[RMDB]
RNA sequence: GGGAACGACUCGAGUAGAGUCGAAAAAAGUCACCCUCCUCGCAUCGCAAGUUCGUGCUUGCGACUUACACGUAGGGCGAGGGGUGGGCGAAAGUUGCCCUGAGACCGUAACUUUCGUAGUCAUUGAAAAACUACAAAGCCUUCGGGCUUUGUAGAACCUCACCAUUCACUUCGGUGAAUGGUGAGGAAAAGAAACAACAACAACAAC
Reactivity to 2A3 in 0.01 (KOAc 150mM, MgCl2 10mM, bicine 150mM(pH8.5), 24C), signal-to-noise 1, nucleotides 027 to 156: a000a000g200u140c100a120c030c000c000u050c020c000u000c000g000c000a010u010c010g000c010a010a010g000u240u220c160g140u300g060c000u000u020g000c000g000a000c000u050u070a020c150a040c140g220u190a090g040g160g000c010g020a000g000g010g000g000u090g030g000g030c000g000a010a000a000g000u000u010g000c010c010c000u040g040a040g040a070c010c010g010u010a000a000c000u010u000u000c010g010u020a010g130u040c020a070u030u150g110a030a040a000a000a000c010u000a000c000a000a000a040g000c010c010u040u040c210g070g010g000c000u010u000u000g000u010a000g000a000a000